[RMDB]
RNA sequence: GGGAACGACUCGAGUAGAGUCGAAAACAUAAUUUUACAUCCUUCUCUUCGUCCUUAUUUUUUCGCACACUUCUGAAUUCAUUUUUGCUUCGGAUCCUUAAGGAUAUUUGUACUGAAGCCUGAGAUGCACCACCUCAUUUCUCUCCUGUUUUCUCGAUAAAAUUUAAUCAUUCGUGAUUAAAUUUUAAAAAGAAACAACAACAACAAC
Reactivity to 2A3 in 0.01 (KOAc 150mM, MgCl2 10mM, bicine 150mM(pH8.5), 24C), signal-to-noise 2, nucleotides 027 to 156: c020a050u290a240a130u150u150u170u130a060c060a040u030c020c000u080u060c060u020c010u100u070c020g020u110c010c000u060u070a200u110u060u010u030u010u090c060g050c010a060c000a020c020u110u070c040u000g110a100a070u070u050c020a050u010u010u070u130u130g040c000u030u030c000g020g010a020u020c000c000u080u240a120a080g040g000a010u050a040u170u230u150g060u000a050c010u020g020a030a010g050c010c010u010g000a020g010a050u030g010c000a000c000c040a020c020c000u020c010a020u000u100u020c020u020c000u010c010c010u080g110u110u110u030u040c060u060c000g070a010

This 207-nucleotide RNA was probed chemically with 2A3. For 2A3, 528 sequencing reads were counted.